[RMDB]
RNA sequence: GGGAACGACUCGAGUAGAGUCGAAAAAAGAAGUUCCGCUGGGCGACCGGUACCCUGCAUGAGGUAAGCAGGAAGUCCGAUGAACAUGUAUCCGCAGUUGUACCUAGAAUGAAUCUCUGAGACGCGGUUGAGGUACUUGUGGCAGAAUAUGGAAGCGCCAUUCUUUGGUUUUCGAACCAAAGAAUGGAAAAGAAACAACAACAACAAC
Reactivity to 2A3 in 0.01 (KOAc 150mM, MgCl2 10mM, bicine 150mM(pH8.5), 24C), signal-to-noise 2, nucleotides 027 to 156: a010a010g080a080a010g040u030u030c030c010g020c060u020g000g000g050c000g020a020c010c030g000g040u030a050c000c010c010u010g020c080a140u150g030a050g150g090u070a060a040g040c010a040g010g020a060a010g010u000c000c000g050a100u130g030a030a030c030a050u060g040u080a090u050c010c010g000c020a040g000u090u040g040u050a030c000c010u020a020g120a100a150u110g020a040a030u080c040u000c040u090g080a060g010a130c020g000c030g070g000u010u050g050a030g000g000u030a040c000u050u030g040u020g010g000c020a030g060a200a050u160a080u160g050g030a090a040g070c030g020
Reactivity to DMS in 0.01 (KOAc 150mM, MgCl2 10mM, bicine 150mM(pH8.5), 24C), signal-to-noise 2, nucleotides 027 to 156: a080a110g030a120a190g000u000u010c010c030g020c030u000g020g000g010c000g030a140c030c010g040g000u000a100c060c010c000u010g020c080a080u010g010a060g000g010u010a110a180g010c030a060g030g020a130a230g020u000c010c020g030a100u010g000a090a110c070a030u000g010u000a090u000c040c020g010c000a090g040u000u000g000u000a070c010c020u000a090g000a040a090u000g010a110a040u000c050u000c030u000g000a100g070a100c050g020c050g040g000u010u000g040a100g000g030u000a030c050u000u000g010u010g020g030c050a090g000a060a090u020a080u000g000g000a060a110g020c140g000